[RMDB]
Description:
An RNA of 177 nucleotides, treated with 2A3 and DMS and read out base by base. The data come from the RNA Mapping Database (RMDB), library OK2TRN. DMS adducts were read by reverse transcription with MarathonRT. For 2A3 the reverse transcriptase was SuperScript II with manganese. Values cover nucleotides 27 to 126. Conditions: 150 mM KOAc, 10 mM MgCl2 and 150 mM bicine (pH 8.5), 24 C.
RNA sequence: GGGAACGACUCGAGUAGAGUCGAAAAUGCAUGAAGUGACGAGCCCGCAGGCCUUUGAGGGGCUGCACAUGGCAGGCCGCCCGGUGCGCCACCCGGAAAAGACGCUUGCCGUGGUGGACCAUAACGAGAUUAUACGUCACUUCGGUGACGUAUAAUCAAAAGAAACAACAACAACAAC
Reactivity to 2A3 in 0.01 (KOAc 150mM, MgCl2 10mM, bicine 150mM(pH8.5), 24C), signal-to-noise 4, nucleotides 027 to 126: u110g000c020a050u080g090a210a030g050u040g110a050c020g020a030g040c000c050c020g000c020a020g030g130c010c020u140u130u150g120a150g010g030g010g000c020u020g000c010a040c000a050u060g020g000c010a010g040g030c010c000g000c000c000c020g050g030u030g000c040g010c010c010a020c020c000c010g010g040a090a200a020a010g100a030c100g020c140u050u100g030c010c000g040u100g010g010u020g010g010a060c020c020a080u090a130a020c070g030a010
Reactivity to DMS in 0.01 (KOAc 150mM, MgCl2 10mM, bicine 150mM(pH8.5), 24C), signal-to-noise 5, nucleotides 027 to 126: u000g020c050a060u010g000a130a100g020u000g020a070c040g000a150g010c020c010c100g020c040a080g000g000c020c020u000u000u010g010a170g000g010g000g020c020u000g020c050a080c100a060u010g010g020c020a060g010g010c060c050g000c060c010c030g010g010u000g000c030g010c020c020a070c060c000c000g000g000a090a060a070a100g000a120c190g000c090u000u010g010c030c010g020u010g010g020u000g000g010a140c030c040a060u000a040a110c170g010a170